An RNA of 207 nucleotides, treated with 2A3 and read out base by base. Reactivities are given for positions 27 through 156.

RNA sequence: GGGAACGACUCGAGUAGAGUCGAAAAGGUGUUACAGGAGAAGAUGGUACACUGAAGAUACAGCUGAGUGAUUGCUCAUGUUAAGUGGUUACGUAGGAUGCCAGCUGGUGACGGUGACCACCGUAAGGGCAGCUAGCUUUCAAAGUAGGGAAUUACACUACCUCCUCGACUUCGGUCGAGGAGGUAGAAAAGAAACAACAACAACAAC
Reactivity to 2A3 in 0.01 (KOAc 150mM, MgCl2 10mM, bicine 150mM(pH8.5), 24C), signal-to-noise 1, nucleotides 027 to 156: g000g080u020g020u230u060a040c090a080g070g040a000g040a100a080g000a000u020g000g020u020a040c040a000c100u040g030a000a030g030a010u100a030c050a030g000c040u120g000a050g110u020g070a130u010u120g000c000u080c090a090u150g000u160u070a250a160g030u040g130g000u120u000a000c000g000u000a200g060g000a040u050g060c060c030a040g000c040u080g020g000u000g000a000c000g000g020u020g010a000c000c000a030c000c000g040u110a030a020g000g000g000c000a000g040c000u030a000g000c000u140u000u140c140a080a080a000g010u010a010g040g000g090a000a090u250u300a060c100a000